[RMDB]
RNA sequence: GGGAACGACUCGAGUAGAGUCGAAAACAGAUGGUCGUGGAACGAUUAUUGACACUAUAUAUGAAAAGCGCAUUAACCAUGUGCCAGAGUUGAUGCGCAUGGGAGCAGAUAUCUCAGUUAUUGGUGGUAGCACCGGGUACUUCGGUACCCGGUGCUAAAAAGAAACAACAACAACAAC
Reactivity to 2A3 in 0.01 (KOAc 150mM, MgCl2 10mM, bicine 150mM(pH8.5), 24C), signal-to-noise 1, nucleotides 027 to 126: c100a000g280a040u140g020g000u000c000g020u300g070g130a110a060c000g060a000u050u050a000u300u300g080a000c000a000c050u070a040u040a000u000a000u240g060a010a040a070a000g000c000g000c140a000u000u000a050a000c000c000a000u060g050u000g300c060c020a180g070a000g050u050u000g000a000u000g040c000g000c050a000u000g000g000g000a050g000c130a000g000a110u050a140u200c000u000c050a010g040u040u000a080u020u210g000g040u110g030g010